[RMDB]
RNA sequence: GGGAACGACUCGAGUAGAGUCGAAAAGGUAUUCGUGGGCGGAAGCGAAGCUCCUGACGGUACGUUGGGUCAUGGAGCACGUUGGUCUCCGCGAAGGCUCCUGAAAGUGAAAUUGUAUGAAGGCCUGUCGUGACGCCAGUAUUUUUUAACAUGGACCGUACAUCCGUGUAUUCGUACACGGAUGUACAAAAGAAACAACAACAACAAC
Reactivity to 2A3 in 0.01 (KOAc 150mM, MgCl2 10mM, bicine 150mM(pH8.5), 24C), signal-to-noise 3, nucleotides 027 to 156: g040g000u070a080u060u090c090g010u060g000g010g060c060g040g000a040a020g020c020g050a160a040g040c000u020c020c010u000g000a010c040g020g120u130a020c030g060u090u060g120g000g020u010c050a090u270g010g000a000g010c020a000c010g030u010u030g010g000u000c020u000c030c000g000c000g000a000a030g020g030c030u060c030c000u050g080a130a010a020g030u060g050a000a070a140u130u060g090u070a040u160g070a060a010g030g020c020c030u050g090u130c040g060u090g030a040c030g010c000c020a000g000u040a100u020u130u020u020u020u110a100a040c100a060u130g030g040a010c070c080
Reactivity to DMS in 0.01 (KOAc 150mM, MgCl2 10mM, bicine 150mM(pH8.5), 24C), signal-to-noise 2, nucleotides 027 to 156: g030g000u000a060u000u000c040g020u010g040g030g020c070g030g000a170a110g030c020g000a110a160g020c020u000c020c000u000g010a040c030g050g010u010a020c170g000u010u010g030g040g000u010c020a070u020g050g010a030g010c020a090c020g030u000u000g030g030u010c020u000c020c000g020c040g000a070a040g010g010c040u010c000c000u010g010a070a070a110g030u000g000a030a070a100u010u000g010u000a110u000g050a130a170g010g020c040c020u010g000u000c040g020u000g010a210c030g020c020c030a150g010u010a000u000u000u000u000u000u010a070a110c050a090u000g020g000a120c070c080